[RMDB]
RNA sequence: GGGAACGACUCGAGUAGAGUCGAAAAUCAUCAAGAAGUAGGCUUAGGCCAAUUGCAUGGUGGUGAAAGUAGAGGGAAGGUAGCACUUCGACGCCUCUAAGUACGCUGUGGGAGUAGUGCUUAAAUCAAAAGCACAGCGACUUCGGUCGCUGUGCAAGUUACAUCAAUGGUUCGCCAUUGAUGUAACAAAAGAAACAACAACAACAAC
Reactivity to DMS in 0.01 (KOAc 150mM, MgCl2 10mM, bicine 150mM(pH8.5), 24C), signal-to-noise 3, nucleotides 027 to 156: u000c050a060u000c060a080a140g010a060a090g000u000a070g010g020c020u000u010a110g010g030c020c030a040a060u010u010g030c040a150u010g010g030u000g040g020u020g010a070a050a110g020u000a060g010a110g030g000g010a120a070g020g010u000a080g030c080a080c050u020u000c050g030a110c050g020c030c000u000c040u000a040a120g010u000a080c050g020c040u010g020u000g000g000g000a130g030u000a060g030u000g000c020u010u000a050a110a140u010c060a040a020a070a260g010c000a020c000a010g040c010g000a050c000u000u010c300g030g010u000c010g030c010u000g010u000g000c010a000a000
Reactivity to 2A3 in 0.01 (KOAc 150mM, MgCl2 10mM, bicine 150mM(pH8.5), 24C), signal-to-noise 5, nucleotides 027 to 156: u070c010a010u030c020a040a050g060a080a030g110u140a060g070g000c030u090u060a060g070g020c020c030a050a080u080u070g040c040a020u050g020g000u020g020g020u050g030a120a050a010g070u060a020g020a020g000g040g020a030a030g050g010u050a020g030c030a020c050u030u020c050g060a070c050g080c010c000u030c020u040a050a040g030u030a010c040g010c090u040g020u080g030g060g000a040g010u080a010g010u010g010c010u050u100a050a080a040u120c100a070a070a020a000g000c000a000c000a010g000c000g000a000c000u010u020c060g080g000u000c000g000c010u000g000u000g000c000a000a010
This 207-nucleotide RNA was probed chemically with DMS and 2A3. DMS (dimethyl sulfate) methylates the pairing face of unpaired adenines and cytosines. For DMS the reverse transcriptase was MarathonRT. The RNA was probed in 150 mM KOAc, 10 mM MgCl2 and 150 mM bicine (pH 8.5) at 24 C.